[RMDB]
RNA sequence: GGGAACGACUCGAGUAGAGUCGAAAAGCUCGAAGAAGCCGAGCGCCAGGCCGCCGCCAAAGCUGCUGAGCGUGAACGCCGGAAGGCCGAGCGCCAGGCCGCCAAGGCUGCGCAGAAAGAGGCCGAGGACCGUGCCCGCUGGGACCGCAUCGGCGAGAAACAGACAAACAUUCGUGUUUGUCUGUUUAAAAGAAACAACAACAACAAC
Reactivity to 2A3 in 0.01 (KOAc 150mM, MgCl2 10mM, bicine 150mM(pH8.5), 24C), signal-to-noise 1, nucleotides 027 to 156: g030c010u010c030g080a110a050g040a100a010g060c020c000g030a030g000c000g000c000c000a000g000g060c010c020g000c000c060g020c000c000a000a050a000g000c020u040g000c000u040g030a010g040c000g010u050g010a030a010c030g000c020c000g060g180a080a050g020g000c010c020g010a020g020c010g000c010c000a050g000g000c000c000g000c000c010a040a010g000g000c010u000g000c000g000c000a000g300a030a090a000g070a150g000g000c000c000g030a130g000g080a100c050c040g050u210g010c000c000c020g040c010u000g000g010g050a110c030c070g000c040a190u010c000g000g000c000g070a080g000
Reactivity to DMS in 0.01 (KOAc 150mM, MgCl2 10mM, bicine 150mM(pH8.5), 24C), signal-to-noise 1, nucleotides 027 to 156: g000c030u000c060g000a120a220g000a170a160g000c060c000g000a110g000c070g010c030c020a180g000g020c050c020g040c090c050g030c010c060a080a190a110g000c020u000g040c010u000g030a270g000c020g110u000g020a160a200c070g010c000c010g080g080a100a170g000g000c000c010g010a300g020c030g000c040c040a300g010g020c000c040g000c040c120a070a300g000g000c010u000g000c030g000c030a130g000a020a090a040g000a100g020g010c000c050g000a100g070g010a100c170c020g010u010g010c000c000c020g000c020u010g030g020g020a210c060c020g020c030a160u000c010g020g020c030g000a100g010